RNA sequence: GGGAACGACUCGAGUAGAGUCGAAAAUGGUGGCUAGAGAUCUUCAUCAUGCCCUGCUUCUACUAAGUCACCUUGUGUCCUUGGGCAGAUCCCUCCCCUGCUGUGGUCCUCAGGAAAGAGGAGGGCGAUCUUAGACUAGUUUCGACUAGUCUAAGAUAAAAGAAACAACAACAACAAC
Reactivity to 2A3 in 0.01 (KOAc 150mM, MgCl2 10mM, bicine 150mM(pH8.5), 24C), signal-to-noise 2, nucleotides 027 to 126: u100g000g000u010g000g010c020u060a020g010a020g010a150u050c040u190u090c090a090u050c020a100u140g050c020c000c010u050g060c060u060u060c020u050a260c010u060a120a030g010u010c010a010c020c000u030u080g100u010g030u050c030c000u040u080g020g010g000c030a030g020a190u110c000c000c000u000c010c010c000c000u010g030c020u060g030u050g120g040u030c000c000u040c010a020g060g080a090a100a020g050a030g020g010a010g000g010g010c010g010
Reactivity to DMS in 0.01 (KOAc 150mM, MgCl2 10mM, bicine 150mM(pH8.5), 24C), signal-to-noise 9, nucleotides 027 to 126: u010g010g030u010g010g010c020u000a050g010a110g010a080u010c070u010u010c110a070u000c090a090u010g010c030c010c020u000g010c100u000u000c030u000a120c070u010a060a060g010u000c010a020c010c010u000u010g010u010g010u000c020c020u000u010g010g010g030c040a040g010a110u010c010c000c000u000c010c000c000c010u000g010c040u000g010u000g020g010u000c020c020u000c050a110g010g010a060a070a140g010a130g010g010a020g000g010g020c240g000

Structure probing data (2A3 and DMS) for a 177-nucleotide construct. The RNA was probed in 150 mM KOAc, 10 mM MgCl2 and 150 mM bicine (pH 8.5) at 24 C. Source: RMDB library OK2TST, as collected in RNAgym. For 2A3, 13,351 sequencing reads were counted.